Annotation:
Chemical mapping of a 207-nucleotide RNA with 2A3 and DMS. 2A3 adducts were read by reverse transcription with SuperScript II with manganese. The data come from the RNA Mapping Database (RMDB), library OK3TST.
[RMDB]
RNA sequence: GGGAACGACUCGAGUAGAGUCGAAAAAAAGAUACCAUGUUACAAGUGGAACUAGACGCUGAAUUUGGACCAAACGCAACUAAACCAUAGAAUAAAAAAAGACCGCCUUAAUUGGUGGUUUUCUUUUGUAAUUGAGCAUAUUUUAAAGAGGAUAUACUAUCAAUAGUACGUUCGCGUACUAUUGAUAAAAAGAAACAACAACAACAAC
Reactivity to 2A3 in 0.01 (KOAc 150mM, MgCl2 10mM, bicine 150mM(pH8.5), 24C), signal-to-noise 1, nucleotides 027 to 156: a000a000a000g060a040u090a070c010c000a000u000g000u070u110a000c020a050a060g030u090g030g040a040a000c020u010a070g030a130c050g040c190u050g040a140a030u060u030u080g120g000a020c010c020a150a040a080c040g090c040a030a030c050u090a140a120a000c010c020a030u020a050g070a080a080u110a280a060a000a000a000a000a000g000a010c000c000g020c010c010u040u040a110a110u300u030g000g000u000g000g000u000u000u000u040c000u000u030u000u000g030u050a090a120u050u070g020a000g000c060a050u040a110u140u130u040u120a070a100a020g000a020g000g000a010u000a000u000a110c030
Reactivity to DMS in 0.01 (KOAc 150mM, MgCl2 10mM, bicine 150mM(pH8.5), 24C), signal-to-noise 1, nucleotides 027 to 156: a050a140a110g010a160u010a170c000c020a160u010g000u010u000a060c040a090a070g060u000g020g020a070a030c050u010a030g020a070c020g020c000u000g000a090a070u000u000u010g000g000a160c040c030a070a110a080c120g000c040a110a110c010u000a040a090a100c000c060a070u010a060g010a190a100u030a010a030a030a050a050a000a020g000a030c010c000g090c000c000u000u000a150a110u030u000g050g080u000g030g000u000u000u000u000c000u000u020u000u020g020u000a070a100u000u000g000a120g020c030a020u000a050u020u000u010u000a020a010a090g000a130g060g010a060u010a010u000a040c020